[RMDB]
RNA sequence: GGGAACGACUCGAGUAGAGUCGAAAAUUUAUUCCAGUAAUGUCCCACUGUCAAGACAGAAGGUUAUUUUUCUUGGCUUCUCUGUUGAUUUCCUUGGCAUUAAGCAAUUUUAAUGACUUCUGGAAGUAUCCAUAAUCUAUUCUACGUGUGGUGACCAUCCAGGUAUUUAUUUCGAUAAAUACCUGGAAAAAGAAACAACAACAACAAC
Reactivity to DMS in 0.01 (KOAc 150mM, MgCl2 10mM, bicine 150mM(pH8.5), 24C), signal-to-noise 1, nucleotides 027 to 156: u000u000u010a060u020u020c020c020a130g000u010a040a090u020g000u000c010c000c020a080c060u000g000u020c060a080a080g000a080c050a030g010a080a070g040g030u000u000a100u000u000u000u010u000c050u040u000g010g010c020u000u000c040u010c040u020g040u000u010g020a140u000u010u000c020c020u010u020g020g000c000a010u000u000a020a050g010c050a080a080u000u000u010u000a020a040u000g020a020c010u000u000c090u020g030g010a080a160g000u000a170u000c030c020a080u000a010a080u020c030u000a110u000u010c040u000a060c090g010u000g050u010g040g040u020g000a090c000c020a230
Reactivity to 2A3 in 0.01 (KOAc 150mM, MgCl2 10mM, bicine 150mM(pH8.5), 24C), signal-to-noise 1, nucleotides 027 to 156: u030u070u030a040u020u020c000c000a000g030u050a070a060u130g010u010c060c030c010a010c010u040g010u040c010a030a000g000a030c010a000g010a010a040g100g020u070u010a080u040u290u060u020u010c050u060u060g050g000c000u070u000c060u000c030u100g030u080u060g120a130u140u060u130c000c000u000u040g030g010c000a030u000u090a110a000g010c020a040a150u060u140u060u170a100a060u110g030a050c020u000u040c010u060g000g010a000a000g090u090a030u160c060c030a090u080a140a080u040c040u050a040u130u140c020u110a020c020g050u080g000u020g060g000u150g130a030c290c000a000